[RMDB]
RNA sequence: GGGAACGACUCGAGUAGAGUCGAAAAGAUAUGGAUCGUUUGGAGAUUGCAUACAUCGGAAACGAUGUAUGAUCUAUGAAGAACGAGUCCUAAGUCAAAUCCGAUGCGGGUUCGCCCGCAUCGGAAAGUAUGACUUCUUGUUCGCAAGAAGUCAUACAAAAGAAACAACAACAACAAC
Reactivity to DMS in 0.01 (KOAc 150mM, MgCl2 10mM, bicine 150mM(pH8.5), 24C), signal-to-noise 3, nucleotides 027 to 126: g000a030u000a050u010g000g000a150u000c000g000u000u000u010g010g010a060g010a060u010u000g020c010a010u000a010c000a000u000c000g000g000a020a010a050c000g020a020u000g000u000a000u010g000a050u000c040u000a190u010g000a300a160g000a010a010c000g000a020g000u020c000c000u000a020a100g000u010c020a080a140a160u000c000c000g000a000u000g000c000g000g000g000u000u010c240g020c000c000c000g000c010a000u000c000g000g000a000a000a060
Reactivity to 2A3 in 0.01 (KOAc 150mM, MgCl2 10mM, bicine 150mM(pH8.5), 24C), signal-to-noise 3, nucleotides 027 to 126: g000a000u020a000u060g000g000a000u010c010g000u020u010u020g080g050a190g010a240u080u160g010c010a010u010a010c000a010u010c000g010g010a000a000a000c000g000a000u010g000u010a010u000g000a000u040c020u070a300u150g010a000a010g000a000a000c020g000a020g300u120c000c000u010a000a020g010u020c010a040a030a170u000c000c000g010a000u000g010c000g020g000g070u040u090c260g110c010c010c010g000c000a010u000c000g010g010a000a000a000